[RMDB]
This 177-nucleotide RNA was probed chemically with DMS and 2A3.
It was measured as part of the RMDB library OK2TRN.
Values cover nucleotides 27 to 126.
The reactions ran in a buffer of 150 mM KOAc, 10 mM MgCl2 and 150 mM bicine (pH 8.5), at 24 C.

RNA sequence: GGGAACGACUCGAGUAGAGUCGAAAAGACUCUGACUGUGUCACACUCACAGUCUGACUCACAGAGUGUGACAGUCACUCUCAGAGUCACACUGACUGUCUCAGAGACUGUCACUGAGACAGUGUCAGUUAGGGAUCGACUUCGGUCGAUCCCUAACAAAAGAAACAACAACAACAAC
Reactivity to DMS in 0.01 (KOAc 150mM, MgCl2 10mM, bicine 150mM(pH8.5), 24C), signal-to-noise 2, nucleotides 027 to 126: g000a020c020u010c030u000g000a010c030u000g020u010g020u010c000a020c040a060c060u000c000a090c120a070g010u000c070u010g000a160c120u000c300a220c140a080g000a020g030u000g020u000g000a030c060a020g010u000c240a230c060u020c030u010c060a020g000a030g020u000c050a090c130a110c000u000g000a030c000u000g000u000c000u000c000a030g000a060g020a080c110u000g010u000c150a110c000u000g000a050g000a030c010a000g000u000g000u000c110a090
Reactivity to 2A3 in 0.01 (KOAc 150mM, MgCl2 10mM, bicine 150mM(pH8.5), 24C), signal-to-noise 2, nucleotides 027 to 126: g000a000c000u000c000u010g000a000c030u040g020u030g030u110c000a000c000a010c020u000c010a030c000a020g030u000c100u120g070a090c020u040c130a090c060a010g000a000g030u010g000u000g000a000c000a010g090u060c050a040c050u010c000u020c030a000g000a000g020u000c010a000c030a010c020u060g040a010c010u020g010u040c000u010c010a010g010a020g030a080c050u130g090u270c040a000c080u010g010a010g000a010c010a000g030u020g020u020c000a030